Structure probing data (2A3 and DMS) for a 177-nucleotide construct.
The data come from the RNA Mapping Database (RMDB), library M2PK50.
DMS (dimethyl sulfate) methylates the pairing face of unpaired adenines and cytosines.
The reactions ran in a buffer of 150 mM KOAc, 10 mM MgCl2 and 150 mM bicine (pH 8.5), at 24 C.

RNA sequence: GGGAACGACUCGAGUAGAGUCGAAAAGAACGAAACUUCGGUUUCGUUCAAAUAAAGCGUAGCUCGCGCUACGCAGGCAACGAGUAGGUCGUGCCACCUACAAAAGAUUUUAGUUCGCUAAAAUCAACUAACCCUCUAUGUUCGCAUAGAGGGUUAGAAAAGAAACAACAACAACAAC
Reactivity to 2A3 in 0.01 (KOAc 150mM, MgCl2 10mM, bicine 150mM(pH8.5), 24C), signal-to-noise 2, nucleotides 027 to 126: g000a000a000c000g010a000a000a000c030u030u080c180g040g010u000u000u000c000g010u000u000c000a000a010a010u120a020a020a000g010c000g000u000a000g010c030u040c140g110c010g000c050u000a000c000g000c010a010g010g010c050a120a120c060g020a030g050u040a040g020g120u100c060g060u060g060c070c030a010c000c000u030a030c020a020a110a010a030g010a000u020u010u000u010a020g010u040u050c210g020c110u000a000a000a000a000u020c000a020a020
Reactivity to DMS in 0.01 (KOAc 150mM, MgCl2 10mM, bicine 150mM(pH8.5), 24C), signal-to-noise 3, nucleotides 027 to 126: g010a000a010c000g020a000a010a010c000u000u000c200g030g000u000u000u000c000g000u010u000c000a030a080a040u010a060a080a100g000c000g010u000a000g000c010u000c300g020c300g010c010u000a000c000g010c000a050g000g020c110a050a060c050g000a100g010u000a030g000g030u010c030g010u020g010c090c070a130c000c000u020a010c050a120a080a080a130g010a010u000u000u010u000a020g020u010u020c160g030c000u000a000a000a010a000u000c010a110a200

DMS adducts were read by reverse transcription with MarathonRT. For 2A3, 3,024 sequencing reads were counted.